Record summary:
Chemical mapping of a 177-nucleotide RNA with DMS and 2A3. For DMS the reverse transcriptase was MarathonRT. High DMS reactivity at an A or C suggests that its Watson-Crick edge is free. The RNA was probed in 150 mM KOAc, 10 mM MgCl2 and 150 mM bicine (pH 8.5) at 24 C.
[RMDB]
RNA sequence: GGGAACGACUCGAGUAGAGUCGAAAAGAAUAAAUAGUGUCUUGGAGCGCGCGGAGUAAACAUAUAUGGUUCAUAUAUGUCCGUAGGCACGUAAAGAAAGCGCGUCGAAGCGAGAGAAGACUCGCAACGGAUAUAUAUUAUUCGUAAUAUAUAUCCGAAAAGAAACAACAACAACAAC
Reactivity to DMS in 0.01 (KOAc 150mM, MgCl2 10mM, bicine 150mM(pH8.5), 24C), signal-to-noise 4, nucleotides 027 to 126: g000a150a080u050a060a080a050u020a050g010u000g010u000c000u000u040g020g010a130g020c000g030c020g020c010g000g000a180g010u000a120a140a120c010a010u000a020u000a000u010g000g020u040u060c030a020u010a010u000a010u000g000u000c000c000g030u000a040g000g000c000a010c000g000u030a080a060a080g010a060a040a060g020c000g000c000g010u020c040g000a140a100g000c000g020a020g000a120g010a210a120g000a100c000u000c000g010c000a100a190
Reactivity to 2A3 in 0.01 (KOAc 150mM, MgCl2 10mM, bicine 150mM(pH8.5), 24C), signal-to-noise 9, nucleotides 027 to 126: g050a030a080u220a130a070a020u120a040g010u000g020u010c020u050u200g210g050a110g000c020g000c000g000c000g010g000a020g040u290a040a150a000c000a010u000a000u010a000u010g300g100u270u250c040a000u010a000u000a000u000g010u010c000c010g000u010a000g000g000c000a000c010g000u060a070a120a050g100a020a050a000g000c000g000c010g030u030c060g080a100a030g000c000g000a000g010a010g060a240a030g080a060c000u000c000g000c010a000a030